[RMDB]
RNA sequence: GGGAACGACUCGAGUAGAGUCGAAAAACCGUACUCCCGCUCAAGAAGGCGAAGAAGCGGCUCAUGAGGCUGUUCCGGGAGCACGGUGAUGCCCGUUAUCUUGCGUGAAGGAGCGAGUCGAUGGCGGGAGUUAUUGCCGAUUCGUCGGCAAUAACUCAAAAGAAACAACAACAACAAC
Reactivity to 2A3 in 0.01 (KOAc 150mM, MgCl2 10mM, bicine 150mM(pH8.5), 24C), signal-to-noise 2, nucleotides 027 to 126: a000c020c000g010u000a010c000u010c020c010c000g000c020u000c060a040a170g200a100a100g190g000c060g120a150a060g060a060a030g150c010g070g000c000u010c010a240u180g030a070g040g020c050u030g060u110u050c050c000g000g010g000a000g000c000a000c000g010g020u010g010a020u120g030c000c030c000g000u010u030a080u030c050u100u170g060c030g030u070g080a130a070g070g030a080g040c050g010a020g060u070c030g010a020u060g040g000c020g020g050
Reactivity to DMS in 0.01 (KOAc 150mM, MgCl2 10mM, bicine 150mM(pH8.5), 24C), signal-to-noise 2, nucleotides 027 to 126: a040c010c010g020u010a050c000u000c000c000c020g010c150u000c130a100a110g000a160a060g010g040c050g030a130a120g000a110a040g000c050g000g010c020u010c040a140u010g000a230g000g010c010u010g000u000u000c120c040g000g020g000a030g000c000a000c000g020g000u000g000a070u020g020c030c000c000g000u000u010a060u010c060u000u000g040c080g020u000g020a090a140g020g000a110g000c030g000a070g000u000c120g000a070u000g000g010c020g000g000